[RMDB]
An RNA of 177 nucleotides, treated with DMS and 2A3 and read out base by base. 2A3 adducts were read by reverse transcription with SuperScript II with manganese.
RNA sequence: GGGAACGACUCGAGUAGAGUCGAAAACCACGGCAACGUGCGGAAUAGGGCCACAGAGACGAGUCUUGCCGCCGGGUUCGCCCGGCGGGAAGGGUGAAACGCGGUAACCUCCACCUGGAGCAAUCCCUCGAAGGUUCUGAUUCGUCAGAACCUUCGAAAAAGAAACAACAACAACAAC
Reactivity to DMS in 0.01 (KOAc 150mM, MgCl2 10mM, bicine 150mM(pH8.5), 24C), signal-to-noise 1, nucleotides 027 to 126: c050c010a130c090g050g000c070a120a040c100g030u020g000c050g000g010a000a080u000a090g000g010g010c000c000a070c060a030g030a130g000a050c030g010a070g000u000c000u000u000g000c000c000g000c000c000g000g000g000u000u150c270g000c050c010c000g000g040c020g000g000g000a000a000g000g000g000u010g000a070a060a020c010g000c180g000g000u000a120a100c090c000u000c030c010a080c060c040u020g000g000a140g010c050a160a140u020c000c010c000
Reactivity to 2A3 in 0.01 (KOAc 150mM, MgCl2 10mM, bicine 150mM(pH8.5), 24C), signal-to-noise 3, nucleotides 027 to 126: c000c000a030c020g030g000c020a080a030c050g040u090g050c050g010g030a070a120u130a130g060g000g030c010c010a030c010a040g050a000g030a060c110g030a010g050u010c010u010u030g160c000c000g000c000c000g030g000g000u040u020c110g050c040c000c000g010g000c000g000g000g000a000a000g000g000g000u090g020a020a040a000c060g000c040g050g010u040a070a060c000c010u020c010c020a090c010c020u060g010g000a010g020c020a030a110u000c000c000c000